[RMDB]
RNA sequence: GGGAACGACUCGAGUAGAGUCGAAAAGGGGUUAGCGUUUGCAAAACGCUGUUAUUGCAAUGAUCUGGAUUUAGCGCAAGUAGGACCGAAAUCCAGAUCAACAUUUCGGACCUCCGCGCUAAUAAAAGCAUGCUGUCCUAUUCGUAGGACAGCAUGCAAAAGAAACAACAACAACAAC
Reactivity to DMS in 0.01 (KOAc 150mM, MgCl2 10mM, bicine 150mM(pH8.5), 24C), signal-to-noise 1, nucleotides 027 to 126: g040g020g000g010u020u000a020g040c030g030u020u030u010g000c190a060a020a040a030c010g010c020u010g010u000u000a100u000u010g010c100a110a100u000g000a060u010c020u010g030g000a200u000u000u000a040g000c000g030c040a060a100g060u010a010g010g000a040c030c020g010a030a010a030u000c170c060a110g010a060u010c110a050a060c130a010u010u010u030c030g000g020a110c000c000u000c060c160g000c020g000c010u000a000a060u020a020a070a090a130